[RMDB]
RNA sequence: GGGAACGACUCGAGUAGAGUCGAAAAUUGAAGGUAAAACAGCCUGUGGGUGAAACACACCCACAGGGCCCAUGGGGCGCUAGCACUCUGGUAUCACGGUACCUUCGUGCGCCUGUUUUACCGAAGGGGCGCUGUUGCUUCGGCAACAGCAAAAGAAACAACAACAACAAC
Reactivity to 2A3 in 0.01 (KOAc 150mM, MgCl2 10mM, bicine 150mM(pH8.5), 24C), signal-to-noise 3, nucleotides 027 to 129: u080u120g060a090a010g000g000u000a000a000a000a030c000a000g010c000c000u000g000u010g000g000g000u020g070a070a140a010c120a010c010a000c060c000c000a000c010a000g000g000g000c000c010c000a080u230g130g000g000g010c010g010c070u110a040g000c010a010c000u040c010u020g000g000u000a000u010c020a040c230g150g010u000a010c000c000u000u020c010g000u000g000c000g000c000c000u020g000u000u010u000u000a000c000c000g000a020a000g000g020g020g020c050

Notes
Conditions: 150 mM KOAc, 10 mM MgCl2 and 150 mM bicine (pH 8.5), 24 C. The record gives the reactivity of an RNA of 170 nucleotides to 2A3. The 2A3 profile rests on 12,686 reads. High 2A3 reactivity points to a flexible backbone, as in loops and unpaired stretches.